[RMDB]
RNA sequence: GGGAACGACUCGAGUAGAGUCGAAAAGGCGGCGAGCGCGGCUUUUCCGCGCCAGCGUGAAAGCAGUGUGGACUGGCCGUCAGGUACCCGUACUGUCACCGUGACCGAUGACCAUCCUUUUGAUCGCCAGAUGGCGGUCAUUCGUGACCGCCAUCUGAAAAGAAACAACAACAACAAC
Reactivity to DMS in 0.01 (KOAc 150mM, MgCl2 10mM, bicine 150mM(pH8.5), 24C), signal-to-noise 2, nucleotides 027 to 126: g010g020c020g020g000c030g010a150g020c030g000c020g010g000c150u000u000u050u000c110c010g010c020g030c240c190a040g000c010g010u010g000a030a040a020g000c010a030g000u010g060u010g010g020a120c090u010g000g010c010c000g000u000c040a040g020g020u000a100c050c010c040g000u000a060c090u020g010u010c030a090c040c050g020u000g000a070c040c050g010a080u000g010a100c020c050a140u000c040c040u020u020u000u000g010a070u010c060g010c090
Reactivity to 2A3 in 0.01 (KOAc 150mM, MgCl2 10mM, bicine 150mM(pH8.5), 24C), signal-to-noise 1, nucleotides 027 to 126: g030g000c010g020g000c050g010a050g000c030g010c010g020g030c010u040u000u080u040c010c010g000c000g030c060c000a030g020c020g030u060g020a000a020a010g010c020a030g060u020g030u100g240g090a150c040u050g050g000c000c010g010u000c010a000g140g000u050a060c000c000c000g000u070a050c050u120g030u060c010a000c070c000g020u010g030a040c050c000g050a060u060g050a040c050c000a030u070c010c000u120u060u030u180g090a070u160c030g080c150